[RMDB]
RNA sequence: GGGAACGACUCGAGUAGAGUCGAAAAUGCCGCUCAUCCGCCACAUAUCCUGAUCUUCCAGAUAACUGCCGUCACUCCAGCGCAGCACCAUCACCGCGAGGCGGUUUUCUCCGGCGCGUAAAAAUGCAUUACUUCAAACGUUCGCGUUUGAAGUAAUAAAAGAAACAACAACAACAAC
Reactivity to DMS in 0.01 (KOAc 150mM, MgCl2 10mM, bicine 150mM(pH8.5), 24C), signal-to-noise 4, nucleotides 027 to 126: u010g010c050c030g010c070u010c070a100u000c040c050g010c020c030a060c090a090u000a130u000c020c020u000g010a080u000c060u010u000c030c030a100g010a070u010a070a120c070u000g000c030c020g020u000c060a090c070u000c070c050a070g020c070g020c060a050g020c080a060c050c030a080u000c050a050c100c030g010c090g030a100g020g010c030g020g000u000u000u010u000c030u000c030c050g000g010c050g020c050g000u000a030a040a070a090a100u000g010c120
Reactivity to 2A3 in 0.01 (KOAc 150mM, MgCl2 10mM, bicine 150mM(pH8.5), 24C), signal-to-noise 1, nucleotides 027 to 126: u030g000c000c000g000c020u050c010a070u000c020c000g010c020c000a080c010a030u140a050u050c000c000u020g050a080u020c020u100u050c040c010a020g000a120u110a130a050c020u050g030c030c010g030u060c020a030c060u030c000c030a010g010c030g020c050a030g070c000a020c050c000a000u060c010a020c020c010g000c030g070a030g020g040c000g030g000u070u030u030u020c020u000c000c000g060g030c010g000c030g080u110a030a100a140a000a020u150g040c010
Chemical mapping of a 177-nucleotide RNA with DMS and 2A3. The DMS profile rests on 3,510 reads. For DMS the reverse transcriptase was MarathonRT.